This 177-nucleotide RNA was probed chemically with DMS and 2A3. 2A3 adducts were read by reverse transcription with SuperScript II with manganese. It was measured as part of the RMDB libraries RFM100 and RFMREP. Values cover nucleotides 27 to 126. For DMS the reverse transcriptase was MarathonRT.
RNA sequence: GGGAACGACUCGAGUAGAGUCGAAAACGUGUAGGAAGGAUAACCGCGGGAAACUGUGGCUAAUAACACGAGUAAGACGCCGACCCAUCAGUUUUAUCGUACGGUAAGGGCGUACGAUGGCUUUAACUCUAUCCUUGAUGUUCGCAUCAAGGAUAGAAAAAGAAACAACAACAACAAC
Reactivity to DMS in 0.01 (KOAc 150mM, MgCl2 10mM, bicine 150mM(pH8.5), 24C), signal-to-noise 7, nucleotides 027 to 126: c050g020u000g020u010a050g010g020a150a080g020g000a100u030a110a170c030c030g010c000g000g010g000a100a060a140c010u010g050u010g000g010c040u000a070a100u050a050a060c040a040c040g010a090g010u010a070a100g010a060c080g010c010c020g000a140c010c010c010a100u050c160a090g010u010u010u020u020a030u010c000g010u000a000c000g000g010u040a120a090g000g000g000c010g010u000a000c000g000a010u010g010g010c020u000u010u010a070a090c190
Reactivity to 2A3 in 0.01 (KOAc 150mM, MgCl2 10mM, bicine 150mM(pH8.5), 24C), signal-to-noise 9, nucleotides 027 to 126: c010g010u030g010u050a050g060g130a110a040g080g030a060u060a130a040c000c000g000c020g020g010g010a040a070a020c010u020g010u030g050g000c040u040a060a040u110a170a020c030a010c050g010a030g060u070a080a040g050a030c070g020c050c000g040a080c010c000c000a060u100c050a020g030u000u020u050u150a010u010c000g000u000a000c010g000g040u040a050a080g120g050g010c000g000u000a000c000g000a010u020g010g000c030u040u040u070a050a020c020